[RMDB]
RNA sequence: GGGAACGACUCGAGUAGAGUCGAAAACUAGUGCCGCCAAGCUACCAUCUGUAGGAUUAUGGCUGAACGCCUCUAAGUCAGAAUCCAUGCUGGAAUAGACGAUAAUCACCUUUCCCGAUGUGCCGCGAAGCCAUCUAGACUUCGGUCUAGAUGGCUUAAAAGAAACAACAACAACAAC
Reactivity to 2A3 in 0.01 (KOAc 150mM, MgCl2 10mM, bicine 150mM(pH8.5), 24C), signal-to-noise 4, nucleotides 027 to 126: c030u030a020g020u020g120c020c010g010c030c010a030a010g010c010u060a030c030c000a040u050c030u110g090u100a100g020g020a030u040u050a040u060g010g020c000u010g020a070a010c030g040c010c010u030c030u040a060a000g000u020c000a010g040a040a020u020c010c010a110u140g040c030u060g050g000a080a120u090a130g050a010c020g050a010u110a100a040u040c020a030c000c010u050u040u030c020c000c020g020a070u050g020u060g050c000c000g030c030g050
Reactivity to DMS in 0.01 (KOAc 150mM, MgCl2 10mM, bicine 150mM(pH8.5), 24C), signal-to-noise 3, nucleotides 027 to 126: c030u000a020g030u010g020c010c020g010c070c050a040a080g010c030u000a120c040c060a030u020c070u000g010u010a110g010g000a030u010u000a080u020g010g010c040u000g000a090a180c120g010c020c000u000c020u000a140a080g010u010c020a030g020a110a060u020c020c020a090u000g000c020u010g000g030a070a050u070a050g010a090c090g000a080u010a060a080u040c040a050c040c020u000u000u000c000c000c000g020a070u010g020u010g000c070c010g040c070g000
Background
An RNA of 177 nucleotides, treated with 2A3 and DMS and read out base by base. For DMS the reverse transcriptase was MarathonRT. The RNA was probed in 150 mM KOAc, 10 mM MgCl2 and 150 mM bicine (pH 8.5) at 24 C. It was measured as part of the RMDB libraries RFM100 and RFMREP. 2A3 adducts were read by reverse transcription with SuperScript II with manganese.